[RMDB]
RNA sequence: GGGAACGACUCGAGUAGAGUCGAAAAUCACGUUUGAGGAUACGACAACGGUAUGACGGUAUGACAACAUGACAGCAUGACAGACGCGCUCACAGAUGCGAUCCGUCGCAUCAAGGAUCUCCAGCAGGAUGUUGAGCGGCUGAAGUCCUCCGGUAAACGAAAACCAAACAUUCGUGUUUGGUUUUCGAAAAGAAACAACAACAACAAC
Reactivity to DMS in 0.01 (KOAc 150mM, MgCl2 10mM, bicine 150mM(pH8.5), 24C), signal-to-noise 1, nucleotides 027 to 156: u000c020a080c080g010u010u000u020g020a040g100g030a040u000a060c070g070a230c170a040a180c080g000g010u000a080u000g010a090c030g000g030u010a030u000g000a210c030a030a100c050a100u000g000a060c030a020g020c080a050u010g030a210c100a040g000a140c030g010c010g100c020u020c070a160c100a170g000a010u010g020c050g000a050u000c110c250g000u000c010g080c000a030u000c020a040a110g000g040a090u000c000u010c000c000a140g020c020a150g030g020a030u000g040u000u000g000a110g030c030g000g000c000u010g010a230a120g010u000c000c030u000c000c000g000g000u000a080a120a140
Reactivity to 2A3 in 0.01 (KOAc 150mM, MgCl2 10mM, bicine 150mM(pH8.5), 24C), signal-to-noise 2, nucleotides 027 to 156: u080c040a040c060g040u040u030u120g020a010g020g040a010u050a220c050g020a060c110a090a010c060g020g010u050a090u140g100a050c000g040g050u130a060u130g040a020c020a080a000c020a070u050g100a010c030a040g050c030a070u040g030a020c000a000g060a020c020g020c010g000c220u000c020a090c020a020g000a000u000g000c000g010a000u000c050c150g000u020c000g010c010a010u030c030a040a000g080g010a040u010c040u010c040c000a090g040c050a060g050g080a030u030g100u120u080g030a020g000c020g010g020c020u030g000a010a000g060u000c010c010u000c000c000g000g140u210a110a000a020
This 207-nucleotide RNA was probed chemically with DMS and 2A3.
For 2A3, 966 sequencing reads were counted.
Values cover nucleotides 27 to 156.
The DMS profile rests on 1,733 reads.
For 2A3 the reverse transcriptase was SuperScript II with manganese.